[RMDB]
An RNA of 177 nucleotides, treated with DMS and 2A3 and read out base by base.
Values cover nucleotides 27 to 126.
RNA sequence: GGGAACGACUCGAGUAGAGUCGAAAAUCAUCAUUAAGUGCCAUGUCAACUAAAAGAUCUUGAAGUGUGUAUGGUUCAUCAUCUUCAUAUAGAACUAUUGAACUUGCAUCUGCAUAUUCAUUUUACACAUUAUAUUUUAUUUCGAUAAAAUAUAAUGAAAAGAAACAACAACAACAAC
Reactivity to DMS in 0.01 (KOAc 150mM, MgCl2 10mM, bicine 150mM(pH8.5), 24C), signal-to-noise 4, nucleotides 027 to 126: u020c050a050u030c060a060u020u020a100a110g010u010g000c040c140a030u020g010u010c060a070a090c090u020a040a080a070a080g020a060u010c110u010u000g000a050a040g010u000g010u000g010u010a050u010g000g000u020u010c020a030u010c120a050u030c070u000u020c080a060u030a050u000a080g010a030a050c110u010a050u000u000g000a010a030c070u000u020g010c030a100u010c090u020g000c010a010u020a070u000u020c040a070u000u020u010u010a070c050a250
Reactivity to 2A3 in 0.01 (KOAc 150mM, MgCl2 10mM, bicine 150mM(pH8.5), 24C), signal-to-noise 9, nucleotides 027 to 126: u040c010a010u010c010a020u080u160a210a040g030u030g030c020c010a050u080g050u090c020a030a020c050u140a070a070a070a070g070a100u050c040u060u080g060a080a040g040u030g010u000g020u120a090u150g090g000u050u030c010a020u020c000a020u010c020u090u030c060a060u140a050u080a210g050a090a050c040u060a100u140u050g010a010a010c000u010u020g000c010a080u070c080u120g020c010a020u050a150u090u100c030a050u050u090u090u210a040c030a000